[RMDB]
RNA sequence: GGGAACGACUCGAGUAGAGUCGAAAAGACGCGAGAGACGCGAGACGCGCAAUGGCAGAAGCCGCAAUAGAUGAUACGACGCAAGAGGCAAGACGGAGAGCGCGCAUCUUGCGUUAAUAACCAAGAACAUGGUACGACUCUUCGGAGUCGUACCAUGAAAAGAAACAACAACAACAAC
Reactivity to 2A3 in 0.01 (KOAc 150mM, MgCl2 10mM, bicine 150mM(pH8.5), 24C), signal-to-noise 3, nucleotides 027 to 126: g040a010c020g010c020g040a040g000a010g000a130c000g000c000g030a030g020a030c050g020c000g000c020a030a180u090g040g000c000a010g070a130a060g060c000c000g060c050a040a130u120a120g130a040u160g010a000u060a170c050g000a020c020g010c010a000a030g000a010g060g000c000a000a110g040a020c020g050g060a020g010a000g080c000g010c020g030c010a030u000c010u000u000g000c030g000u010u010a000a020u070a000a020c010c010a030a040g030a070a020
Reactivity to DMS in 0.01 (KOAc 150mM, MgCl2 10mM, bicine 150mM(pH8.5), 24C), signal-to-noise 2, nucleotides 027 to 126: g000a080c040g040c000g010a090g000a060g040a180c110g000c100g010a100g000a140c170g000c060g000c050a130a130u000g000g000c040a070g040a150a060g080c010c000g000c110a140a030u020a160g010a100u000g000a080u000a110c130g000a020c000g030c040a020a040g020a050g050g010c000a040a210g020a040c090g000g000a180g000a130g000c000g000c210g000c260a020u000c020u020u020g000c000g000u000u000a000a040u050a070a260c000c050a070a090g050a170a150

Description
Chemical mapping of a 177-nucleotide RNA with 2A3 and DMS. The 2A3 profile rests on 2,306 reads. 2A3 is a SHAPE reagent: it acylates the 2'-hydroxyl of flexible nucleotides of all four kinds. High DMS reactivity at an A or C suggests that its Watson-Crick edge is free.